[RMDB]
RNA sequence: GGGAACGACUCGAGUAGAGUCGAAAAACACUGAGCCAGGAGGAGGCGGAUCCUAGCAUCUCGACAUCGGCUGGCCAGCUGCAGGGAUGGGGCAAAGGGGUUAAGUCCCAGAUCAGAGGGUAUGAGACCUCCUAAAUAGCUUCGGCUAUUUAGGAGGAAAAGAAACAACAACAACAAC
Reactivity to 2A3 in 0.01 (KOAc 150mM, MgCl2 10mM, bicine 150mM(pH8.5), 24C), signal-to-noise 1, nucleotides 027 to 126: a000c030a010c020u020g020a020g000c000c010a100g220g260a040g030g020a050g170g000c000g050g000a010u010c010c060u080a030g010c070a020u000c050u100c060g080a060c010a220u030c020g130g000c070u010g010g000c000c010a010g050c120u030g060c030a030g030g030g050a100u190g050g000g000g000c040a140a120a070g000g010g000g010u020u000a020a030g040u010c020c010c000a000g000a030u020c010a010g050a020g090g030g010u080a070u130g040a040g080a080
Reactivity to DMS in 0.01 (KOAc 150mM, MgCl2 10mM, bicine 150mM(pH8.5), 24C), signal-to-noise 3, nucleotides 027 to 126: a140c070a090c050u000g000a150g000c000c020a030g000g010a110g000g000a040g030g040c080g000g000a020u000c040c110u010a110g020c070a010u000c020u040c040g030a100c040a110u000c030g050g000c010u000g000g000c030c030a020g000c130u000g010c070a170g000g000g020a150u000g000g010g020g020c100a060a060a110g000g000g030g010u000u010a080a160g020u000c000c010c000a110g000a070u010c120a080g010a100g000g020g010u010a060u000g000a210g010a110
The data come from the RNA Mapping Database (RMDB), library OK2TST.
This 177-nucleotide RNA was probed chemically with 2A3 and DMS.
The reactions ran in a buffer of 150 mM KOAc, 10 mM MgCl2 and 150 mM bicine (pH 8.5), at 24 C.